[RMDB]
RNA sequence: GGGAACGACUCGAGUAGAGUCGAAAAGAUAUGGAAUGCUUUCCGCUGACAGGUAACUAUUCGGAAACGAACGAAUUACCUGGUGGAGGAAACAUUCCUAAGUCAAAGAUCCUCUUCGGAGGAUCAAGAUAAUCACCGAGUUCGCUCGGUGAUUAUCAAAAGAAACAACAACAACAAC
Reactivity to DMS in 0.01 (KOAc 150mM, MgCl2 10mM, bicine 150mM(pH8.5), 24C), signal-to-noise 4, nucleotides 027 to 126: g000a020u000a300u020g000g000a010a020u000g010c230u000u000u000c000c000g000c010u000g000a030c000a000g000g000u000a000a010c100u000a300u000u000c000g000g010a100a100a180c030g000a010a010c090g010a100a050u010u000a000c000c010u000g010g000u000g000g000a030g000g000a000a000a020c010a010u000u000c000c000u000a010a080g000u010c030a070a130a130g000a000u000c000c000u000c000u000u020c190g010g000a010g000g000a010u000c000a020a070
Reactivity to 2A3 in 0.01 (KOAc 150mM, MgCl2 10mM, bicine 150mM(pH8.5), 24C), signal-to-noise 3, nucleotides 027 to 126: g020a010u080a060u130g000g020a010a020u010g060c190u020u030u000c000c000g000c090u100g030a020c020a010g000g000u020a030a020c050u040a130u020u040c000g040g030a090a110a090c010g020a040a010c030g070a300a300u020u010a000c010c000u000g000g030u020g040g050a030g000g000a000a000a010c000a010u000u000c000c000u010a080a000g060u010c040a070a140a060g000a010u000c000c030u000c010u020u040c280g150g000a010g000g000a010u000c000a000a000

Conditions: 150 mM KOAc, 10 mM MgCl2 and 150 mM bicine (pH 8.5), 24 C. Chemical mapping of a 177-nucleotide RNA with DMS and 2A3. For 2A3 the reverse transcriptase was SuperScript II with manganese. For 2A3, 4,503 sequencing reads were counted. The DMS profile rests on 3,428 reads. The data come from the RNA Mapping Database (RMDB), library TTRDEL. Values cover nucleotides 27 to 126.